[RMDB]
RNA sequence: GGGAACGACUCGAGUAGAGUCGAAAAGCAAAGUGAUUAAGUAUUUGAGAAUUCGUUCAGACCCUUGAAUCUUCAUGCAAGGGCAGGAAGAUGACUUCAAGAAGUGGCCCAAAACAGGAACUGUAAAACUAAGCUAAUCGUUCGCGAUUAGCUUAGUAAAAGAAACAACAACAACAAC
Reactivity to DMS in 0.01 (KOAc 150mM, MgCl2 10mM, bicine 150mM(pH8.5), 24C), signal-to-noise 4, nucleotides 027 to 126: g030c070a040a090a110g020u010g010a120u010u000a070a110g020u000a060u000u000u000g000a190g010a050a090u000u000c050g010u010u010c040a120g020a200c020c020c010u000u000g000a050a040u000c150u000u000c230a080u000g020c000a030a050g000g000g040c130a050g000g010a020a040g010a020u000g010a240c070u010u000c070a040a120g000a040a070g030u010g010g000c000c000c010a060a030a080a090c150a060g030g000a050a060c090u010g000u000a060a060a080
Reactivity to 2A3 in 0.01 (KOAc 150mM, MgCl2 10mM, bicine 150mM(pH8.5), 24C), signal-to-noise 2, nucleotides 027 to 126: g080c000a040a020a060g040u070g130a100u160u170a150a030g000u040a170u080u070u070g050a030g030a000a060u070u010c040g010u060u000c060a060g060a300c000c000c000u000u040g040a010a040u100c050u160u100c130a070u160g000c030a080a060g060g070g000c000a010g030g020a030a050g000a000u020g000a010c030u030u000c040a000a020g020a070a030g090u070g050g000c000c000c000a020a070a020a030c060a050g120g030a070a050c040u060g050u180a000a070a020